[RMDB]
RNA sequence: GGGAACGACUCGAGUAGAGUCGAAAACUAGGAUCGUUCGCGAUCCUAGAAACGCGCGGCACCGUCCGCGGAACAAACGGCAAAACAAGAAAGUCAGCAUAAAAAUCAUCAGCUUCGGCUGAUGAAAGCUUAGGAAUCAGUUCGCUGAUUCCUAAGCAAAAGAAACAACAACAACAAC
Reactivity to DMS in 0.01 (KOAc 150mM, MgCl2 10mM, bicine 150mM(pH8.5), 24C), signal-to-noise 2, nucleotides 027 to 126: c010u010a000g010g010a000u000c010g010u010u030c230g030c030g010a000u000c000c000u000a040g000a010a090a070c200g010c010g010c040g010g010c010a300c030c000g010u010c000c000g000c020g030g000a020a150c150a010a010a000c000g020g010c090a070a030a040a090c150a110a130g000a050a070a080g010u000c070a040g020c190a070u000a030a030a060a090a180u010c000a010u010c000a000g000c000u010u010c280g030g000c010u030g010a010u000g000a000a060a070
Reactivity to 2A3 in 0.01 (KOAc 150mM, MgCl2 10mM, bicine 150mM(pH8.5), 24C), signal-to-noise 3, nucleotides 027 to 126: c010u000a000g000g010a000u010c000g000u070u050c190g000c010g080a010u000c010c010u020a000g000a000a020a010c110g010c010g000c000g000g060c020a010c070c030g150u180c010c000g000c000g020g050a010a010c020a000a010a000c000g020g040c030a030a050a000a060c080a080a050g140a140a080a030g130u160c060a050g000c060a110u160a200a120a020a010a020u030c000a000u000c000a000g000c000u050u100c180g120g000c000u010g040a000u000g000a010a010a000